This 177-nucleotide RNA was probed chemically with DMS and 2A3.

[RMDB]
RNA sequence: GGGAACGACUCGAGUAGAGUCGAAAAGAUAUGGAUGGGCUGCUAAACGUUUGACGGCUCUCGGAAACGAGAGCCCGAGUUUAGAACUACAGUAGUCCUAAGUCGAGGCUAGCCUUCGGGCUAGCAAUCAAGUACUAAGGUUCGCCUUAGUACUUGAAAAAGAAACAACAACAACAAC
Reactivity to DMS in 0.01 (KOAc 150mM, MgCl2 10mM, bicine 150mM(pH8.5), 24C), signal-to-noise 9, nucleotides 027 to 126: g000a030u000a300u010g000g000a010u000g010g010g010c010u010g000c000u000a010a010a010c020g010u000u010u010g020a150c300g010g000c000u000c000u000c010g000g000a090a080a140c000g000a010g000a020g010c000c000c000g000a020g010u000u000u000a010g000a060a050c070u010a220c070a040g010u000a300g010u000c000c000u010a030a130g000u000c020g000a180g000g000c000u000a000g000c000c000u000u000c230g020g010g020c000u000a000g010c000a030a030
Reactivity to 2A3 in 0.01 (KOAc 150mM, MgCl2 10mM, bicine 150mM(pH8.5), 24C), signal-to-noise 5, nucleotides 027 to 126: g010a020u090a040u170g030g010a020u040g030g300g030c010u030g000c010u040a030a030a040c040g060u080u190u270g070a040c030g000g010c000u000c000u010c010g020g000a070a080a030c010g000a000g010a000g020c000c000c010g000a000g010u020u040u050a030g010a060a020c070u170a050c100a010g020u040a000g000u000c010c000u010a110a010g030u020c040g020a060g140g050c000u000a000g000c000c000u030u080c300g040g000g010c000u000a000g000c000a000a020
Description
The data come from the RNA Mapping Database (RMDB), library TTRDEL. 2A3 adducts were read by reverse transcription with SuperScript II with manganese. The RNA was probed in 150 mM KOAc, 10 mM MgCl2 and 150 mM bicine (pH 8.5) at 24 C. For DMS, 14,365 sequencing reads were counted.